[RMDB]
RNA sequence: GGGAACGACUCGAGUAGAGUCGAAAAUGCGUCACCCGCCCGCACCUGGGUGGUUCGAAAAGGGGGAUCGAUUCUAUGGAGAAAGCCUCUCCGUUCCAAGCCACCUGGUCGUGGCGAGCGUUCAUCGGAUUGUUAUAGCUUUCGAGCUAUAACAAUCAAAAGAAACAACAACAACAAC
Reactivity to 2A3 in 0.01 (KOAc 150mM, MgCl2 10mM, bicine 150mM(pH8.5), 24C), signal-to-noise 9, nucleotides 027 to 126: u120g010c020g050u040c040a120c050c020c010g010c000c000c000g020c030a040c020c040u070g010g000g030u020g010g000u050u050c060g040a030a030a050a080g050g010g010g010g010a040u100c050g030a030u110u030c060u100a170u260g150g000a060g020a060a090a040g090c010c010u020c000u010c010c020g020u060u000c020c010a040a000g010c000c000a000c000c010u020g020g010u030c030g080u170g010g000c010g010a010g000c020g020u070u090c040a130u130c100g070
Reactivity to DMS in 0.01 (KOAc 150mM, MgCl2 10mM, bicine 150mM(pH8.5), 24C), signal-to-noise 7, nucleotides 027 to 126: u020g010c090g010u010c050a120c070c020c010g010c020c010c010g010c140a030c080c000u020g000g000g010u000g000g010u000u000c220g010a040a020a070a070g030g010g010g010g010a110u020c100g010a170u010u000c030u000a150u030g010g010a050g000a060a070a160g000c170c040u010c000u010c010c030g020u000u010c030c040a120a090g010c000c010a010c000c000u010g000g000u010c050g020u030g000g010c000g010a020g000c030g010u000u010c060a100u020c120g010